[RMDB]
RNA sequence: GGGAACGACUCGAGUAGAGUCGAAAAAUCGCAUGCUGCGCCGCCGCGGCCAGCGCGCCAUCGUGGCCUCCAGCCAGGCGCCGAGCAGACGCAGAUCGUCGGGAUCGAACUGGUCGAAUGGCUCGUCCUGGAUUUCGACGUUCGCGUCGAAAUCCAGAAAAGAAACAACAACAACAAC
Reactivity to 2A3 in 0.01 (KOAc 150mM, MgCl2 10mM, bicine 150mM(pH8.5), 24C), signal-to-noise 1, nucleotides 027 to 126: a100u060c000g010c010a070u100g050c090u040g000c010g020c040c010g070c010c070g080c000g050g000c000c030a000g040c020g000c000g000c000c000a300u300c080g080u120g150g000c000c000u000c020c000a020g080c010c000a000g020g010c010g000c000c010g040a000g000c030a050g000a010c000g010c040a000g030a110u090c020g040u000c010g130g040g000a030u040c020g000a010a070c000u010g000g070u070c000g100a160a090u160g040g010c000u010c000g030u000c060
Reactivity to DMS in 0.01 (KOAc 150mM, MgCl2 10mM, bicine 150mM(pH8.5), 24C), signal-to-noise 1, nucleotides 027 to 126: a070u030c120g000c140a250u000g010c060u000g040c030g010c130c020g000c100c130g000c100g000g000c020c070a030g040c020g070c110g000c060c080a100u000c080g120u000g000g000c010c060u030c160c090a120g040c070c070a120g000g000c000g090c010c120g000a110g000c000a280g000a070c050g040c000a140g000a000u000c000g020u000c000g030g000g000a000u010c000g000a070a120c070u000g000g060u000c100g000a020a200u000g000g000c070u000c000g000u000c030
Record summary
This 177-nucleotide RNA was probed chemically with 2A3 and DMS. For DMS the reverse transcriptase was MarathonRT. It was measured as part of the RMDB library OK1LIB. Conditions: 150 mM KOAc, 10 mM MgCl2 and 150 mM bicine (pH 8.5), 24 C.